[RMDB]
The record gives the reactivity of an RNA of 177 nucleotides to DMS and 2A3. For 2A3, 1,888 sequencing reads were counted. The DMS profile rests on 2,891 reads.

RNA sequence: GGGAACGACUCGAGUAGAGUCGAAAACUGCGCUCGGCGUGUGUGCUGUGUGUGCUUGCUGGUGCCCUGUGCUGCGGUGGGACGUCAAGGUCAGUUCGUAUGCUGCGGGAAAUGGCCGCCGAGGAGGCCAUACCAGGCUCUUCGGAGCCUGGUAUGGAAAAGAAACAACAACAACAAC
Reactivity to DMS in 0.01 (KOAc 150mM, MgCl2 10mM, bicine 150mM(pH8.5), 24C), signal-to-noise 2, nucleotides 027 to 126: c040u000g000c090g020c030u010c030g000g000c020g040u010g030u000g030u000g030c010u010g030u010g000u000g020u010g010c040u000u000g000c010u020g010g010u010g010c050c020c020u000g000u000g010c030u000g010c030g000g030u000g010g000g000a040c050g010u010c260a080a170g010g010u000c020a070g020u010u000c050g000u000a050u010g000c050u010g010c090g020g030g010a020a050a060u000g000g010c030c000g010c040c010g010a070g010g010a080g010g010
Reactivity to 2A3 in 0.01 (KOAc 150mM, MgCl2 10mM, bicine 150mM(pH8.5), 24C), signal-to-noise 2, nucleotides 027 to 126: c010u050g010c090g020c040u030c020g030g020c000g000u140g030u040g010u020g060c020u030g030u050g050u050g010u030g280c030u000u060g020c030u040g010g020u050g030c000c000c000u050g030u040g030c010u040g000c020g020g010u110g050g040g050a010c020g020u150c120a140a000g110g000u000c010a040g060u100u000c040g000u020a040u240g050c060u020g040c070g000g000g020a050a080a040u110g020g010c000c000g000c000c000g010a020g020g020a020g010g010